[RMDB]
RNA sequence: GGGAACGACUCGAGUAGAGUCGAAAAGGACCGUCCCCUCGGUAAUGGCGAAUGGGACCCACAAACCUCUCUAGAUUCCGAUAGAGAAUCGAGAGGAAAGUGGCUCUCCCUUAGCCAUCCGAGUGGAGGAUGUAUAAGGGUUCGCCCUUAUACAUCCAAAAGAAACAACAACAACAAC
Reactivity to 2A3 in 0.01 (KOAc 150mM, MgCl2 10mM, bicine 150mM(pH8.5), 24C), signal-to-noise 3, nucleotides 027 to 126: g050g050a040c010c000g040u010c010c000c010c000u010c000g000g020u070a070a040u010g000g020c010g020a030a010u010g000g000g010a080c120c000c000a000c000a010a190a050c000c000u000c000u020c030u060a070g000a010u010u000c000c010g170a240u130a200g260a020g000a030a000u000c000g000a000g000a000g000g000a000a100a000g000u000g010g000c000u000c000u000c000c000c020u010u010a000g000c000c000a010u000c000c000g010a000g000u020g010g000a040
Reactivity to DMS in 0.01 (KOAc 150mM, MgCl2 10mM, bicine 150mM(pH8.5), 24C), signal-to-noise 2, nucleotides 027 to 126: g000g000a270c030c030g020u030c030c000c040c000u010c010g010g000u000a050a030u000g030g000c010g000a200a060u000g000g000g000a030c180c000c000a010c000a020a120a300c000c000u000c000u000c000u010a160g000a000u000u000c000c000g020a190u010a110g020a180g000a010a000u000c000g010a000g000a010g010g010a000a040a150g000u000g000g000c020u000c060u000c000c000c010u000u010a250g020c000c000a010u000c000c010g000a040g010u000g010g000a110